[RMDB]
Overview:
The record gives the reactivity of an RNA of 170 nucleotides to 2A3 and DMS.
RNA sequence: GGGAACGACUCGAGUAGAGUCGAAAAUCCGGCAGGGAAGCCCGAAGGUGGGAGAGGGGGAGAACACUUCGAGAGUUGGGGGAUAGAAAGAGGGCGAAUUUCCUCGGGAGGAUCCCCCAAGCUUCCAAUAUAGAUCUAUUCGUAGAUCUAAAAAGAAACAACAACAACAAC
Reactivity to 2A3 in 0.01 (KOAc 150mM, MgCl2 10mM, bicine 150mM(pH8.5), 24C), signal-to-noise 6, nucleotides 027 to 129: u020c000c000g010g030c030a030g000g010g020a030a010g020c010c000c010g060a050a030g060g060u110g040g000g020a040g040a010g000g000g010g040g000a050g010a020a010c050a020c040u070u130c060g070a060g010a000g080u040u040g000g000g000g000g000a020u010a030g060a020a080a010g010a030g010g010g000c080g090a060a080u090u100u070c000c000u000c000g000g020g000a040g030g020a010u010c000c000c000c000c000a000a000g020c020u070u040c030c000a070a020u210a000
Reactivity to DMS in 0.01 (KOAc 150mM, MgCl2 10mM, bicine 150mM(pH8.5), 24C), signal-to-noise 9, nucleotides 027 to 129: u000c010c010g020g040c090a070g050g000g020a030a070g040c160c050c060g020a050a020g000g060u020g000g010g010a050g010a070g030g040g030g030g020a040g000a020a010c130a080c080u000u010c050g020a070g040a030g000u030u020g020g020g020g010g010a000u030a030g010a060a190a120g030a020g010g020g030c290g030a070a100u050u020u030c040c010u010c000g000g000g040a230g000g000a050u000c020c020c000c000c020a020a030g000c100u000u000c040c040a090a100u080a120
For DMS, 35,209 sequencing reads were counted.
The data come from the RNA Mapping Database (RMDB), library 15KLIB.
Values cover nucleotides 27 to 129.
DMS adducts were read by reverse transcription with MarathonRT.
For 2A3 the reverse transcriptase was SuperScript II with manganese.
The reactions ran in a buffer of 150 mM KOAc, 10 mM MgCl2 and 150 mM bicine (pH 8.5), at 24 C.